An RNA of 177 nucleotides, treated with DMS and 2A3 and read out base by base. The data come from the RNA Mapping Database (RMDB), library OK2TST. Conditions: 150 mM KOAc, 10 mM MgCl2 and 150 mM bicine (pH 8.5), 24 C. 2A3 adducts were read by reverse transcription with SuperScript II with manganese. Values are in units of 0.01, from 0 to 300, in steps of 10. For DMS, 777 sequencing reads were counted.

RNA sequence: GGGAACGACUCGAGUAGAGUCGAAAAAUGCUGGACGUAUCUUUCGAUGCUGCGGCAGCGCGUUCGAAGCUCAAGCAAGUUGCAUCCGGCUAUAUCAACGUCUAUGGCGAGCCGGUGAUCCUGCCGCACUGCGUACAGGCUUCGGCCUGUACGCAGUAAAAGAAACAACAACAACAAC
Reactivity to DMS in 0.01 (KOAc 150mM, MgCl2 10mM, bicine 150mM(pH8.5), 24C), signal-to-noise 1, nucleotides 027 to 126: a010u000g020c050u000g000g020a030c070g040u000a090u010c080u000u000u000c050g010a060u020g030c120u010g050c020g000g020c110a120g030c140g000c070g000u000u010c020g000a140a100g000c020u000c180a120a090g010c000a040a120g000u000u000g020c060a170u000c020c000g000g020c040u000a040u060a100u020c140a070a250c070g010u000c010u000a140u020g020g040c050g000a070g020c020c000g000g000u000g000a080u000c110c000u000g000c020c010g000c020
Reactivity to 2A3 in 0.01 (KOAc 150mM, MgCl2 10mM, bicine 150mM(pH8.5), 24C), signal-to-noise 1, nucleotides 027 to 126: a000u080g020c020u050g010g020a020c020g000u020a000u130c070u050u300u090c130g060a070u070g000c040u030g000c000g010g000c020a040g080c020g000c040g050u020u100c000g090a160a040g000c000u030c130a070a080g050c010a100a020g020u090u110g100c080a050u050c000c010g030g000c040u070a090u000a010u230c040a060a140c010g060u000c070u250a160u300g100g000c000g020a000g010c000c040g000g070u030g020a000u020c010c010u000g000c050c000g000c010